[RMDB]
RNA sequence: GGGAACGACUCGAGUAGAGUCGAAAACAAGGGUUAUCUCACAACCUCAGAUGCUGGAUAAGUCCAAGGAGGCAGAAUCGCUUUUGGAUGACAUUCAGAAAGGCCGGAGUGAUUAUUUGGAAGAGAACGGUGAGUUCAUUUUCGAAUGAACUCACCGAAAAGAAACAACAACAACAAC
Reactivity to DMS in 0.01 (KOAc 150mM, MgCl2 10mM, bicine 150mM(pH8.5), 24C), signal-to-noise 3, nucleotides 027 to 126: c070a170a060g000g000g000u000u000a060u030c070u020c090a090c160a000a080c040c010u000c120a070g000a140u040g000c020u000g010g000a050u010a090a300g000u000c010c010a000a070g020g000a070g000g030c040a070g000a140a120u050c220g000c010u000u020u050u000g020g010a040u000g000a140c160a150u010u030c010a000g010a060a130a110g000g000c040c020g000g010a080g000u030g000a070u030u000a090u020u010u010g010g010a100a080g000a130g000a070a080
Reactivity to 2A3 in 0.01 (KOAc 150mM, MgCl2 10mM, bicine 150mM(pH8.5), 24C), signal-to-noise 4, nucleotides 027 to 126: c040a090a100g010g000g020u040u010a080u040c070u030c020a060c040a050a030c000c000u030c030a050g040a130u110g100c020u000g000g000a030u010a060a010g020u010c010c020a110a010g180g180a100g150g110c040a050g180a280a140u160c120g000c010u070u070u040u030g020g000a000u010g000a010c010a080u020u060c010a010g060a080a070a010g050g000c040c000g000g040a020g010u040g010a030u030u120a040u110u110u030g030g040a100a040g040a010g010a120a010